Structure probing data (2A3 and DMS) for a 177-nucleotide construct. 2A3 adducts were read by reverse transcription with SuperScript II with manganese. DMS (dimethyl sulfate) methylates the pairing face of unpaired adenines and cytosines. For DMS the reverse transcriptase was MarathonRT.
[RMDB]
RNA sequence: GGGAACGACUCGAGUAGAGUCGAAAAGGAGAUCGAAGAUGACCGACGUCAGCACGGUCAGGAUGUAGGUCCGCAUGCAUCCAAGUUGACGAAACUUCACGAUUUCCAAAGCGGACAAGAAGUCAAAGGUGCAUCGUAUAUUCGUAUACGAUGCACCAAAAGAAACAACAACAACAAC
Reactivity to 2A3 in 0.01 (KOAc 150mM, MgCl2 10mM, bicine 150mM(pH8.5), 24C), signal-to-noise 3, nucleotides 027 to 126: g000g000a050g000a000u010c050g040a210a060g040a080u110g010a000c000c030g020a040c050g220u240c100a020g060c070a010c030g000g030u000c010a010g000g000a000u000g000u020a000g000g000u000c010c000g020c010a000u010g000c000a000u000c000c000a000a000g000u000u020g030a040c090g090a050a030a000c020u020u020c030a000c080g000a000u000u000u030c000c020a020a070a030g000c020g010g010a000c010a020a040g140a070a010g140u260c130a100a010a060
Reactivity to DMS in 0.01 (KOAc 150mM, MgCl2 10mM, bicine 150mM(pH8.5), 24C), signal-to-noise 1, nucleotides 027 to 126: g020g000a040g000a010u000c070g030a210a020g010a300u020g000a010c000c000g000a110c060g020u000c090a110g000c090a220c010g000g000u040c000a020g000g010a010u000g030u000a000g000g000u000c000c000g050c020a040u000g010c000a000u000c000c000a110a000g000u000u000g000a220c230g000a090a000a010c000u000u000c200a280c010g000a000u000u000u000c000c000a100a060a150g000c000g000g020a090c040a140a080g000a070a020g010u000c010a100a020a130